[RMDB]
RNA sequence: GGGAACGACUCGAGUAGAGUCGAAAAAGCGAGCCUACCUGCUGCACCCGUGAGCAUGGGCGGCCCCAUCUGCCUCCUCCUUCAGGUGAGAUGGCAGGAUCAGAGAGAUGGAAUGAAUGCUGCCGUGGGUUAGCGGGAUAUUCGUAUCCCGCUAACCAAAAGAAACAACAACAACAAC
Reactivity to DMS in 0.01 (KOAc 150mM, MgCl2 10mM, bicine 150mM(pH8.5), 24C), signal-to-noise 2, nucleotides 027 to 126: a040g010c070g020a100g010c020c030u000a110c060c060u010g000c040u000g000c140a090c030c030c050g020u020g000a110g000c040a040u000g000g020g010c090g000g010c030c130c010c000a090u000c010u010g000c040c010u010c030c020u000c030c020u000u000c120a070g020g010u000g000a120g000a110u000g020g030c050a020g000g000a070u010c110a050g020a100g010a030g000a070u000g000g000a080a070u010g010a100a080u000g020c010u000g000c020c020g040u010g000
Reactivity to 2A3 in 0.01 (KOAc 150mM, MgCl2 10mM, bicine 150mM(pH8.5), 24C), signal-to-noise 1, nucleotides 027 to 126: a030g030c050g070a010g010c020c040u090a090c070c020u050g000c010u040g000c010a060c020c000c000g060u080g070a010g040c060a040u080g000g100g050c020g020g000c000c000c010c000a030u000c010u080g140c000c010u000c000c000u000c000c010u120u120c060a100g010g120u120g070a180g020a050u100g050g000c060a000g050g030a040u140c080a000g160a030g000a000g000a090u080g000g050a050a100u150g090a140a040u080g000c020u040g020c020c030g060u100g010
Source information
An RNA of 177 nucleotides, treated with DMS and 2A3 and read out base by base. For 2A3 the reverse transcriptase was SuperScript II with manganese. The RNA was probed in 150 mM KOAc, 10 mM MgCl2 and 150 mM bicine (pH 8.5) at 24 C. The data come from the RNA Mapping Database (RMDB), library OK2TRN.